RNA sequence: GGGAACGACUCGAGUAGAGUCGAAAACGAUCUGUUCGCAGAUCGAGCUACGGAGACGUAGCAAAGCGAGCGAGGGCACGGGCGCUCGCACUACCGGAACUCAAACCAUAUCCACGUGUGCUAGGAUAUGGCCGUGCCCAAAGGAUCAGCACACGAAAGUAGCUAAUUAUUUCGAUAAUUAGCUACUAAAAGAAACAACAACAACAAC
Reactivity to 2A3 in 0.01 (KOAc 150mM, MgCl2 10mM, bicine 150mM(pH8.5), 24C), signal-to-noise 4, nucleotides 027 to 156: c010g000a000u000c010u020g040u100u080c270g050c090a000g000a010u000c000g000a040g010c000u000a000c000g030g010a100g020a050c010g010u000a000g000c030a030a070a000g010c010g010a000g010c000g000a020g000g000g000c010a000c010g030g030g000c010g000c010u010c000g050c000a010c010u090a070c000c040g120g040a110a060c050u100c190a120a080a090c020c000a010u010a000u010c020c010a050c120g000u020g000u010g000c010u030a020g010g000a000u000a000u010g020g000c000c000g000u000g000c000c000c000a090a070a010g090g020a080u110c030a010g000c000a010c000a000c000g030a110a070
Reactivity to DMS in 0.01 (KOAc 150mM, MgCl2 10mM, bicine 150mM(pH8.5), 24C), signal-to-noise 1, nucleotides 027 to 156: c000g020a000u040c000u000g000u000u010c300g050c050a080g030a030u000c000g060a120g020c000u000a000c000g000g050a230g000a250c060g000u000a000g010c010a050a040a060g000c030g020a040g010c000g000a140g050g010g030c050a020c090g010g030g000c010g000c020u010c020g020c000a020c050u000a300c000c010g010g000a060a100c040u000c020a120a080a090c000c000a020u000a010u000c000c010a030c070g010u000g020u000g030c000u000a190g000g000a020u000a000u000g000g000c070c010g030u000g110c020c010c040a090a080a170g000g040a150u000c090a030g030c010a010c010a010c020g010a060a150
The data come from the RNA Mapping Database (RMDB), library OK3TST. This 207-nucleotide RNA was probed chemically with 2A3 and DMS. High 2A3 reactivity points to a flexible backbone, as in loops and unpaired stretches. For 2A3 the reverse transcriptase was SuperScript II with manganese. The RNA was probed in 150 mM KOAc, 10 mM MgCl2 and 150 mM bicine (pH 8.5) at 24 C.